[RMDB]
The record gives the reactivity of an RNA of 177 nucleotides to 2A3 and DMS. For DMS, 1,268 sequencing reads were counted. The reactions ran in a buffer of 150 mM KOAc, 10 mM MgCl2 and 150 mM bicine (pH 8.5), at 24 C. 2A3 adducts were read by reverse transcription with SuperScript II with manganese. DMS adducts were read by reverse transcription with MarathonRT. Source: RMDB library M2PK50, as collected in RNAgym. High DMS reactivity at an A or C suggests that its Watson-Crick edge is free.

RNA sequence: GGGAACGACUCGAGUAGAGUCGAAAAGGUUCCGUCUUCGGACGGAACCAAACAUAGUAUACCCUGUUGCAUGUAUACUAUGAUUUACCGUAAUGCAACGGAAAAUGCCUAGUUUCGACUAGGCAAAUAGUGGUAGUGAGUUCGCUCACUACCACUAAAAAGAAACAACAACAACAAC
Reactivity to 2A3 in 0.01 (KOAc 150mM, MgCl2 10mM, bicine 150mM(pH8.5), 24C), signal-to-noise 1, nucleotides 027 to 126: g000g000u000u000c000c000g000u000c010u030u060c200g090g000a000c000g000g000a000a000c000c010a040a000a000c000a000u010a000g000u010a010u000a000c000c010c080u100g010u000u000g030c010a000u040g010u010a010u000a010c000u000a020u000g030a040u170u240u100a080c000c000g030u060a080a000u010g000c000a010a020c000g090g030a130a160a040a040u140g000c020c000u020a020g010u020u020u130c150g050a020c000u010a000g010g010c000a000a000a000
Reactivity to DMS in 0.01 (KOAc 150mM, MgCl2 10mM, bicine 150mM(pH8.5), 24C), signal-to-noise 1, nucleotides 027 to 126: g030g040u010u000c000c000g070u010c030u010u020c190g020g030a020c040g010g010a010a000c000c000a020a030a060c000a000u000a000g000u000a010u000a010c010c180c170u000g010u000u000g000c000a060u000g010u000a000u000a000c000u000a000u000g000a110u000u010u000a110c040c040g000u030a010a050u000g010c040a020a010c000g020g000a070a050a120a110u000g010c000c000u000a000g010u000u000u010c150g050a010c000u000a000g000g000c000a000a000a030